[RMDB]
RNA sequence: GGGAACGACUCGAGUAGAGUCGAAAAUUCUGGAACCACAUCGCACCACAUUUUGAUGUGAAAUUAGCUAUUGAUGACCGUAACCAAGUCGUUGAGAUGUGGCGUCGUAUUGGUGUUGAAUGCUGGCAAGUUGCUUCGGGAGAUUUUUAAUGGCGUGCCCCUCUUAAAGGUUCGCCUUUAAGAGGGGAAAAGAAACAACAACAACAAC
Reactivity to DMS in 0.01 (KOAc 150mM, MgCl2 10mM, bicine 150mM(pH8.5), 24C), signal-to-noise 3, nucleotides 027 to 156: u000u010c050u020g020g020a300a100c030c020a030c060a070u000c010g010c030a300c020c000a030c040a040u010u000u000u000g030a070u000g020u000g010a090a080a080u000u000a070g000c030u010a090u000u000g020a110u000g010a150c080c040g000u000a050a060c040c040a060a080g020u000c020g030u000u000g000a070g010a040u000g020u000g010g000c000g000u000c070g040u000a120u000u010g010g020u000g010u010u000g010a080a080u000g030c000u000g040g000c040a060a100g020u000u000g020c000u000u000c000g000g000g010a100g010a090u000u000u010u000u010a040a130u000g000g020c030g020u000g000
Reactivity to 2A3 in 0.01 (KOAc 150mM, MgCl2 10mM, bicine 150mM(pH8.5), 24C), signal-to-noise 3, nucleotides 027 to 156: u100u030c040u050g050g050a050a030c010c000a020c020a010u010c020g050c020a060c050c020a040c070a070u070u080u090u230g120a030u050g030u050g050a050a040a040u110u070a040g020c010u040a040u100u090g040a050u050g030a050c040c050g050u070a050a040c030c030a070a010g040u000c000g040u020u050g010a030g010a090u030g010u030g040g000c050g010u060c010g000u010a060u050u080g000g000u020g030u070u060g040a070a050u090g010c020u020g000g000c020a060a000g030u070u050g030c040u040u040c010g000g030g000a050g060a040u140u130u000u040u160a100a060u140g030g040c060g060u090g030
An RNA of 207 nucleotides, treated with DMS and 2A3 and read out base by base. The data come from the RNA Mapping Database (RMDB), library OK3TST. The 2A3 profile rests on 1,583 reads.